This 177-nucleotide RNA was probed chemically with 2A3. The RNA was probed in 150 mM KOAc, 10 mM MgCl2 and 150 mM bicine (pH 8.5) at 24 C. The 2A3 profile rests on 1,016 reads.
[RMDB]
RNA sequence: GGGAACGACUCGAGUAGAGUCGAAAAUCUCCGUGAUUCGUCACGGAGAAACAUAAAUAAAAUGGGUUGAACUCCCACCCUUUUCCGAGGGUAUCGGAAACCAACCUUCGCUCUUCGGAGCGAAGAACCCCACAUCAUGUUUCGACAUGAUGUGGGGAAAAGAAACAACAACAACAAC
Reactivity to 2A3 in 0.01 (KOAc 150mM, MgCl2 10mM, bicine 150mM(pH8.5), 24C), signal-to-noise 1, nucleotides 027 to 126: u020c000u000c000c010g000u000g010a010u000u100c140g020u020c110a010c040g020g000a030g000a000a000a020c010a020u300a080a180a010u190a040a120a060a050u050g000g000g050u030u060g110a100a030c020u040c010c000c000a020c000c000c000u120u140u010u000c000c000g000a020g000g080g100u060a020u030c000g000g060a000a020a020c000c010a070a090c030c000u040u000c000g000c000u030c020u050u050c160g170g000a000g030c030g010a000a000g000a000a010